[RMDB]
RNA sequence: GGGAACGACUCGAGUAGAGUCGAAAAGUCCAUGUCUCAGAGACUGUAUCCAGAGCAUAGCGUGGCCACAGGGCUACUGAGUUCAGCAAGAGAGUCAUUCUCUUGUUCAAUCCAUUAUUGCCUGGGCUACUAGAGUGCGGUUCGCCGCACUCUAGUAAAAAGAAACAACAACAACAAC
Reactivity to 2A3 in 0.01 (KOAc 150mM, MgCl2 10mM, bicine 150mM(pH8.5), 24C), signal-to-noise 1, nucleotides 027 to 126: g060u020c020c000a080u070g040u000c030u020c070a000g040a050g010a180c010u030g060u100a060u100c020c020a050g010a030g070c040a040u100a070g040c030g020u020g000g000c040c020a110c110a170g100g160g000c010u080a090c020u040g000a040g000u040u070c010a020g000c020a010a000g000a000g010a010g090u270c090a130u280u000c010u020c000u010u000g000u000u000c010a000a020u000c010c050a040u130u090a080u190u160g010c010c010u010g000g000g050c020
Reactivity to DMS in 0.01 (KOAc 150mM, MgCl2 10mM, bicine 150mM(pH8.5), 24C), signal-to-noise 3, nucleotides 027 to 126: g000u000c010c020a060u010g010u000c020u000c040a090g000a240g010a060c070u000g010u000a180u020c010c010a100g000a110g030c060a090u000a070g000c140g020u000g010g010c020c020a110c130a050g000g000g000c060u000a060c070u000g000a040g010u000u000c210a010g000c000a010a000g000a010g000a030g020u000c270a080u020u000c000u000c010u000u000g000u000u000c210a030a010u000c050c030a060u000u010a080u010u010g020c030c020u000g010g000g010c090
Structure probing data (2A3 and DMS) for a 177-nucleotide construct. DMS adducts were read by reverse transcription with MarathonRT. High 2A3 reactivity points to a flexible backbone, as in loops and unpaired stretches.